Chemical mapping of a 177-nucleotide RNA with 2A3 and DMS. Conditions: 150 mM KOAc, 10 mM MgCl2 and 150 mM bicine (pH 8.5), 24 C. 2A3 adducts were read by reverse transcription with SuperScript II with manganese. Reactivities are given for positions 27 through 126.
RNA sequence: GGGAACGACUCGAGUAGAGUCGAAAACAGUGAUGGAAACAUCACUGAAAAACCGGAAACGGACAUGACGAUCGCGUGCAUGUCGGGAAACCGUAAACGCGAAAAGAGCUAGCGAAAGCUAGCUCAAAUCAUUACGACGUUUCGACGUCGUAAUGAUAAAAGAAACAACAACAACAAC
Reactivity to 2A3 in 0.01 (KOAc 150mM, MgCl2 10mM, bicine 150mM(pH8.5), 24C), signal-to-noise 5, nucleotides 027 to 126: c010a000g000u000g000a000u000g010g010a030a050a010c000a010u000c000a000c000u000g000a040a000a000a010a000c020c010g050g040a130a120a020c050g090g010a020c000a020u030g020a020c040g100a110u050c020g010c010g040u050g000c010a010u020g010u020c000g010g040g020a090a030a000c040c020g020u130a100a070a080c040g010c020g020a040a050a030a070g000a000g000c000u010a000g000c000g050a110a020a000g000c010u000a000g000c000u000c000a000a000
Reactivity to DMS in 0.01 (KOAc 150mM, MgCl2 10mM, bicine 150mM(pH8.5), 24C), signal-to-noise 3, nucleotides 027 to 126: c000a010g030u010g030a000u010g000g010a150a140a210c010a000u000c000a000c010u010g010a050a040a030a130a070c030c000g080g000a110a110a110c060g040g020a080c030a010u000g010a040c070g010a140u000c030g000c010g010u030g000c040a060u000g010u020c020g010g000g010a070a130a170c220c070g010u020a020a040a040c030g000c010g050a030a090a130a100g000a000g000c000u000a000g000c020g000a100a040a110g000c000u000a000g040c000u010c020a010a030